RNA sequence: GGGAACGACUCGAGUAGAGUCGAAAAGAAGUGGCAGGGACAUGCCCCAUAAGCUCGUUCUAGCAACAUAUGUUUGGCUAGUUCGAGCGAUUAGUCUGGAGGAGCGUCCUCUCGCCUGUUCACGAGACACGUGGUAUAGGUUCGCCUAUACCACGUGAAAAGAAACAACAACAACAAC
Reactivity to 2A3 in 0.01 (KOAc 150mM, MgCl2 10mM, bicine 150mM(pH8.5), 24C), signal-to-noise 7, nucleotides 027 to 126: g160a090a020g050u030g010g010c010a000g010g010g010a030c050a130u190g050c020c000c000c000a050u030a070a040g000c000u000c010g020u000u000c000u000a000g020c010a010a060c030a090u260a100u300g150u060u120u070g120g030c000u000a000g010u000u000c000g000a000g000c000g010a000u000u020a040g110u040c140u100g020g040a090g020g020a100g090c060g080u050c000c000u030c010u020c070g000c000c000u020g070u090u190c040a060c050g030a030g010a030
Reactivity to DMS in 0.01 (KOAc 150mM, MgCl2 10mM, bicine 150mM(pH8.5), 24C), signal-to-noise 4, nucleotides 027 to 126: g010a130a110g020u030g000g000c000a060g000g010g020a070c050a130u010g000c050c010c020c030a030u040a070a200g000c000u000c000g020u000u000c000u000a010g030c000a050a020c040a180u030a120u040g000u020u010u020g050g010c010u010a000g000u000u000c000g020a000g010c000g000a020u010u030a100g000u020c180u010g000g000a050g010g000a170g010c120g020u010c000c010u030c040u010c180g010c020c020u000g000u000u030c050a120c050g000a150g010a230